[RMDB]
RNA sequence: GGGAACGACUCGAGUAGAGUCGAAAAUAAUAAGCACCGGUCCUUCACACAAUGGUAUCAUGAGCAUGUUGGUGGUGUCUAUGACAACUCUAUCACAUGCCCAUUGACAGUUGCAGUAAUUGCUGGAAUACUCAAGACUUCGGUCUUGAGAAAAGAAACAACAACAACAAC
Reactivity to DMS in 0.01 (KOAc 150mM, MgCl2 10mM, bicine 150mM(pH8.5), 24C), signal-to-noise 6, nucleotides 027 to 129: u030a050a060u000a040a030g030c100a090c050c060g010g020u000c050c000u000u000c060a070c110a090c080a040a030u030g000g040u000a100u000c030a060u000g010a050g000c010a000u010g030u040u050g030g000u000g050g000u050g030u020c050u060a080u050g030a080c100a070a050c040u000c020u040a000u000c040a000c010a000u000g000c000c020c020a040u000u000g020a040c150a090g020u030u000g020c060a020g020u050a060a090u010u000g010c030u000g000g000a090a050u050a090
Reactivity to 2A3 in 0.01 (KOAc 150mM, MgCl2 10mM, bicine 150mM(pH8.5), 24C), signal-to-noise 9, nucleotides 027 to 129: u090a000a040u130a030a010g050c050a040c020c000g030g020u030c000c000u030u070c040a030c000a000c010a070a100u050g080g020u110a070u140c070a030u070g020a020g020c000a000u020g020u090u130g160g000u020g020g010u020g020u010c080u130a270u230g050a030c030a060a060c040u010c030u140a010u010c000a000c000a020u020g000c000c010c000a040u030u070g040a020c040a030g020u040u030g010c010a010g020u130a140a100u140u120g000c010u020g020g060a040a030u110a190